[RMDB]
RNA sequence: GGGAACGACUCGAGUAGAGUCGAAAAUACAUCCUUAGGAUUGAAUCGCCAGACAUCCAGGACAUAUGCCCAAAUGGCGCUGCUUCAACCUAGCCGAACGACGCCUAAAAGAGGCAGUGAAAUGUGGUUCGAAAUUCGACAGCAACUUCUUGUUGCGCCUCAAAUAGUCAUUCGUGACUAUUUGAGGAAAAGAAACAACAACAACAAC
Reactivity to 2A3 in 0.01 (KOAc 150mM, MgCl2 10mM, bicine 150mM(pH8.5), 24C), signal-to-noise 6, nucleotides 027 to 156: u130a000c030a050u050c000c000u050u080a100g000g010a080u080u100g050a090a090u270c040g040c060c010a050g030a100c020a030u010c020c020a010g030g010a010c050a120u280a080u170g000c000c020c000a040a110a050u090g030g000c010g010c040u030g000c000u020u020c010a070a060c010c040u070a040g060c050c020g050a080a060c060g140a050c040g030c010c010u040a070a080a030a030g090a030g020g000c040a020g030u030g130a050a050a050u180g000u070g020g080u020u070c080g020a080a100a140u180u170c030g050a030c050a050g110c000a000a020c020u120u140c070u220u300g000u000u000g010c000g040
Reactivity to DMS in 0.01 (KOAc 150mM, MgCl2 10mM, bicine 150mM(pH8.5), 24C), signal-to-noise 3, nucleotides 027 to 156: u000a090c060a090u000c020c010u000u010a120g010g020a120u010u000g010a090a080u000c030g000c090c040a120g000a110c060a080u000c060c060a180g020g000a120c060a110u000a080u000g030c000c000c010a080a130a150u000g010g010c060g010c060u000g010c060u000u020c020a110a120c090c040u010a060g010c030c060g000a100a100c020g010a110c040g000c020c030u000a060a080a130a180g010a100g020g010c030a050g020u000g010a070a090a140u000g020u000g020g000u000u010c020g020a050a070a140u000u010c000g000a060c060a180g000c010a050a050c060u000u010c060u000u000g020u000u000g000c000g000
Structure probing data (2A3 and DMS) for a 207-nucleotide construct. The data come from the RNA Mapping Database (RMDB), library OK3TST. The RNA was probed in 150 mM KOAc, 10 mM MgCl2 and 150 mM bicine (pH 8.5) at 24 C. For DMS the reverse transcriptase was MarathonRT. DMS (dimethyl sulfate) methylates the pairing face of unpaired adenines and cytosines. 2A3 adducts were read by reverse transcription with SuperScript II with manganese.